Chemical mapping of a 177-nucleotide RNA with DMS and 2A3. 2A3 adducts were read by reverse transcription with SuperScript II with manganese. The reactions ran in a buffer of 150 mM KOAc, 10 mM MgCl2 and 150 mM bicine (pH 8.5), at 24 C. Values cover nucleotides 27 to 126. The DMS profile rests on 1,691 reads. It was measured as part of the RMDB library OK1LIB.

[RMDB]
RNA sequence: GGGAACGACUCGAGUAGAGUCGAAAAGAAUUGAGGGAAAGCAGAUAGGCCCGGGCGGGACUGACCGAAGCGUUCUCACCGGACAGUGCCGGCAGGAAUGCCUCACCGGCUGACAUGACGGCUGCGGGUUCUGCCGGAUAUUCGUAUCCGGCAGAACAAAAGAAACAACAACAACAAC
Reactivity to DMS in 0.01 (KOAc 150mM, MgCl2 10mM, bicine 150mM(pH8.5), 24C), signal-to-noise 1, nucleotides 027 to 126: g000a180a080u000u020g010a090g060g000g000a060a050a120g000c050a090g000a170u020a080g000g020c060c010c000g090g000g020c000g000g000g000a020c090u020g000a020c020c000g000a090a100g000c030g020u000u000c000u000c030a210c040c010g010g000a040c000a110g020u020g000c010c010g000g000c080a170g000g030a100a160u020g000c000c000u000c140a130c120c040g080g010c030u060g000a190c100a000u010g000a070c030g020g000c000u000g000c000g000g000
Reactivity to 2A3 in 0.01 (KOAc 150mM, MgCl2 10mM, bicine 150mM(pH8.5), 24C), signal-to-noise 2, nucleotides 027 to 126: g160a020a130u130u110g020a040g000g090g030a110a090a010g030c020a040g070a200u140a060g030g030c020c000c000g010g010g030c020g000g000g030a020c010u010g000a000c010c020g020a030a020g050c000g050u120u010c040u000c000a030c000c020g020g020a020c010a030g070u060g150c000c000g010g000c000a030g020g020a090a030u140g040c000c000u060c020a060c000c060g050g010c010u010g120a000c040a140u100g020a030c000g010g000c000u040g000c000g010g040